RNA sequence: GGGAACGACUCGAGUAGAGUCGAAAAAACGCUGGGCCUCUGCAAGUACUCGCUGAUGGAGCCAUCUGAAGCGCGCACGGAUGGCUAUGAAGUCAGCACGCGAGUAUGAUGACCAGAGGCCUGUGCUGAAGCGCGCACGGCAACCGAAAGGUGCGAAGAGCCAGUUAAGGUUCGCCUUAACUGGCUCAAAAGAAACAACAACAACAAC
Reactivity to 2A3 in 0.01 (KOAc 150mM, MgCl2 10mM, bicine 150mM(pH8.5), 24C), signal-to-noise 1, nucleotides 027 to 156: a010a000c010g010c000u010g000g030g000c000c000u000c000u050g000c000a200a300g000u010a000c000u020c050g000c000u020g010a030u020g000g050a000g000c000c000a010u000c000u020g040a200a050g030c020g000c000g000c000a000c000g020g000a000u010g000g000c010u030a300u030g000a000a000g020u010c000a010g050c090a040c160g070c120g000a000g000u030a020u000g140a180u020g010a010c020c020a000g000a010g000g010c000c000u000g000u000g020c000u030g010a140a050g020c010g020c020g000c000a000c010g000g000c000a000a000c020c000g030a110a080a010g000g020u050g030c050g020a120a090